[RMDB]
RNA sequence: GGGAACGACUCGAGUAGAGUCGAAAAGAUAUGGAUCGCAUAGGGAGGGUGUCGGAAACGACAUUCCAUCGAUCUAUGGCGAUCCUAAGUCAAAACUCGACCAGCAAGUUCGCUUGCUGGUCGAGAAGCUAUUUAGCUCGUUCGCGAGCUAAAUAGCAAAAGAAACAACAACAACAAC
Reactivity to DMS in 0.01 (KOAc 150mM, MgCl2 10mM, bicine 150mM(pH8.5), 24C), signal-to-noise 1, nucleotides 027 to 126: g000a070u000a300u000g010g020a000u010c000g030c020a010u000a020g000g010g010a050g010g010g000u000g010u000c000g000g030a100a060a140c000g010a010c000a010u010u000c020c000a300u010c210g020a050u030c000u000a010u010g000g050c010g000a010u000c000c000u000a010a080g030u010c070a050a050a110a200c010u000c010g010a010c020c000a000g030c010a000a020g010u010u000c300g000c010u010u000g000c010u000g000g000u000c000g010a000g000a020a080
Reactivity to 2A3 in 0.01 (KOAc 150mM, MgCl2 10mM, bicine 150mM(pH8.5), 24C), signal-to-noise 1, nucleotides 027 to 126: g020a000u080a050u230g000g010a000u000c010g000c000a010u000a000g060g000g060a000g060g000g010u010g010u020c010g030g060a070a070a040c020g020a000c010a020u300u200c010c000a090u240c060g030a030u000c020u000a020u030g270g060c000g000a000u000c020c000u000a060a020g020u000c030a000a010a000a160c000u000c000g000a000c000c000a000g000c000a000a000g030u100u200c300g080c240u000u000g020c020u000g060g010u000c000g000a000g000a010a000

An RNA of 177 nucleotides, treated with DMS and 2A3 and read out base by base. It was measured as part of the RMDB library TTRDEL. Values cover nucleotides 27 to 126. The DMS profile rests on 1,091 reads. DMS adducts were read by reverse transcription with MarathonRT. 2A3 adducts were read by reverse transcription with SuperScript II with manganese.